[RMDB]
RNA sequence: GGGAACGACUCGAGUAGAGUCGAAAAGUCCUGCACCAAGGCGCUGGGCGACAAGGUGUACGAGAAACGUAAGCUGGCCUCGCAGGAGAUCCGUCAUCCCAAUUGGGAAAUGUAAUCUUUGCCAGAACAUGGGAUCAGCUUUCGAGCUGAUCCCAUGAAAAGAAACAACAACAACAAC
Reactivity to 2A3 in 0.01 (KOAc 150mM, MgCl2 10mM, bicine 150mM(pH8.5), 24C), signal-to-noise 2, nucleotides 027 to 126: g020u020c000c000u010g020c000a000c020c040a060a030g090g000c010g000c040u090g060g070g010c020g000a090c050a080a020g070g000u050g010u070a060c010g010a020g040a230a130a000c060g060u060a030a040g030c020u000g090g000c020c020u000c040g010c070a050g050g030a000g000a000u000c010c050g070u010c040a050u060c000c000c000a070a140u150u230g000g000g030a000a060a050u100g090u080a000a010u020c010u010u040u070g110c060c010a010g030a050a020
Reactivity to DMS in 0.01 (KOAc 150mM, MgCl2 10mM, bicine 150mM(pH8.5), 24C), signal-to-noise 2, nucleotides 027 to 126: g000u000c000c000u000g010c000a000c000c080a140a270g000g030c000g040c000u030g000g020g070c000g000a040c000a050a240g000g030u020g000u010a060c040g030a210g000a060a110a170c080g000u000a140a100g000c030u030g000g010c070c030u010c090g000c130a080g000g050a040g000a030u000c050c000g040u000c120a180u000c000c000c000a300a170u040u060g000g030g000a010a060a070u010g000u040a110a070u000c080u020u000u000g000c000c050a090g030a160a150